[RMDB]
RNA sequence: GGGAACGACUCGAGUAGAGUCGAAAAGAUAUGGAGUCUCUAAGUGUUCCAUGAAAUCCGAUAAGAUUAUGUCGGAAACGACAUGAAUCUUUUGACGGAUUGUGGAACACUUAGAGACUCCUAAGUCGUGCUAUAGUAAGUUCGCUUACUAUAGCACAAAAGAAACAACAACAACAAC
Reactivity to DMS in 0.01 (KOAc 150mM, MgCl2 10mM, bicine 150mM(pH8.5), 24C), signal-to-noise 3, nucleotides 027 to 126: g010a100u020a300u000g000g000a020g010u000c000u000c000u000a010a020g020u000g010u000u000c000c000a040u000g000a070a080a020u000c000c000g010a200u010a010a010g000a030u000u000a020u000g010u000c010g020g000a130a080a220c000g000a010c000a020u000g010a030a020u000c000u010u010u000u010g030a210c130g000g000a030u010u000g040u000g000g010a010a000c000a010c000u000u000a000g010a000g000a000c000u000c000c000u000a010a070g020u010c110
Structure probing data (DMS) for a 177-nucleotide construct. The DMS profile rests on 5,605 reads. Reactivities are given for positions 27 through 126. The data come from the RNA Mapping Database (RMDB), library TTRINS. Values are in units of 0.01, from 0 to 300, in steps of 10.